RNA sequence: GGGAACGACUCGAGUAGAGUCGAAAAGAAGGAAAGGGAUCCAAACUUUAGAUCACGAUUGAGAGCGGUGGCUAGAGAAGAACCCGCCCCAUCACAACUAAGCGUGUCACAACCCAGCGACUAUCAGCCCUGGACGGGAGUUCGCUCCCGUCCAGGGAAAAGAAACAACAACAACAAC
Reactivity to 2A3 in 0.01 (KOAc 150mM, MgCl2 10mM, bicine 150mM(pH8.5), 24C), signal-to-noise 2, nucleotides 027 to 126: g020a000a170g040g020a060a000a000g020g000g000a080u090c060c000a100a000a080c050u110u060u000a000g070a130u020c000a000c080g090a140u160u160g100a180g080a060g160c090g130g010u020g000g000c000u070a020g000a020g000a280a000g000a000a060c000c060c000g000c000c000c000c020a000u000c000a010c060a090a240c020u030a080a080g030c070g010u100g030u000c060a000c000a050a070c140c020c000a000g000c060g080a130c080u060a090u300c090a010g000
This 177-nucleotide RNA was probed chemically with 2A3. For 2A3 the reverse transcriptase was SuperScript II with manganese. Reactivities are rounded to 0.1 and cut off at 0 and 3. The data come from the RNA Mapping Database (RMDB), library OK1LIB. Conditions: 150 mM KOAc, 10 mM MgCl2 and 150 mM bicine (pH 8.5), 24 C.